[RMDB]
RNA sequence: GGGAACGACUCGAGUAGAGUCGAAAAGAGGGGACGAGUGAGGCUUAUCCCGGGGAACUCGACUUAUCGUCCCCACAUAGCAGAGCCCGGACCCCCUUCAAAAAUGACCGAGGGGGGAGCUAGGAGCGAAACUUACCUAGUUCGCUAGGUAAGUUUCAAAAGAAACAACAACAACAAC
Reactivity to DMS in 0.01 (KOAc 150mM, MgCl2 10mM, bicine 150mM(pH8.5), 24C), signal-to-noise 2, nucleotides 027 to 126: g000a150g020g010g000g030a010c020g040a030g000u000g010a100g030g000c070u040u030a120u000c020c010c010g080g000g020g010a130a180c050u020c020g020a060c110u000u010a200u000c000g000u000c000c000c000c000a060c100a070u000a040g020c090a160g020a150g000c010c000c010g000g000a300c000c000c000c000c000u020u000c000a040a050a090a140a150u000g000a080c300c160g000a050g020g000g010g000g000g000a010g010c000u000a060g020g000a120g000c100
Reactivity to 2A3 in 0.01 (KOAc 150mM, MgCl2 10mM, bicine 150mM(pH8.5), 24C), signal-to-noise 2, nucleotides 027 to 126: g170a040g000g000g030g000a010c000g000a030g080u160g030a050g050g130c010u080u110a070u160c000c000c000g050g000g000g020a140a080c020u020c020g080a080c130u100u100a040u120c000g020u000c030c010c060c000a000c010a030u130a000g000c090a040g010a020g070c000c000c000g000g000a020c000c000c000c000c000u030u000c030a140a240a190a160a180u190g080a080c020c120g000a010g000g000g010g000g010g000a010g010c020u050a040g020g100a090g010c060
This 177-nucleotide RNA was probed chemically with DMS and 2A3. Reactivities are given for positions 27 through 126. For 2A3, 1,467 sequencing reads were counted.